[RMDB]
RNA sequence: GGGAACGACUCGAGUAGAGUCGAAAAGAUAUGGAGCAGAACUACUAGCCCCGAAGAACUUCUUCGGAAACGAAGAAGGGAGGCAUCUAGCUGCUCCUAAGUCAAAACCAGACCUUCGGGUCUGGAAGUUUCGUUAUACCUUCGGGUAUAACGAAACAAAAGAAACAACAACAACAAC
Reactivity to DMS in 0.01 (KOAc 150mM, MgCl2 10mM, bicine 150mM(pH8.5), 24C), signal-to-noise 1, nucleotides 027 to 126: g020a050u000a280u010g000g010a000g010c000a000g000a070a140c000u000a190c020u050a250g000c120c160c000c000g000a110a100g040a130a300c000u000u000c000u010u000c010g000g000a040a010a250c000g000a040a000g040a010a010g000g000g000a070g060g050c140a190u000c080u000a020g040c040u000g010c000u000c000c000u010a000a070g000u000c000a120a120a130a140c010c000a010g010a000c000c010u000u000c300g060g000g020u000c000u000g030g020a040a030
Reactivity to 2A3 in 0.01 (KOAc 150mM, MgCl2 10mM, bicine 150mM(pH8.5), 24C), signal-to-noise 1, nucleotides 027 to 126: g000a010u050a010u200g000g000a000g020c030a000g010a200a070c080u170a030c010u050a300g000c000c000c030c050g190a300a100g000a040a060c000u000u020c000u000u000c000g000g000a050a000a000c020g000a000a000g010a000a000g030g000g000a110g040g050c040a080u110c040u030a000g000c000u000g000c020u020c000c010u000a070a010g020u000c000a000a000a100a150c020c020a010g000a000c010c020u080u140c300g060g000g000u000c000u000g000g000a000a000
Chemical mapping of a 177-nucleotide RNA with DMS and 2A3. 2A3 adducts were read by reverse transcription with SuperScript II with manganese. For DMS, 563 sequencing reads were counted.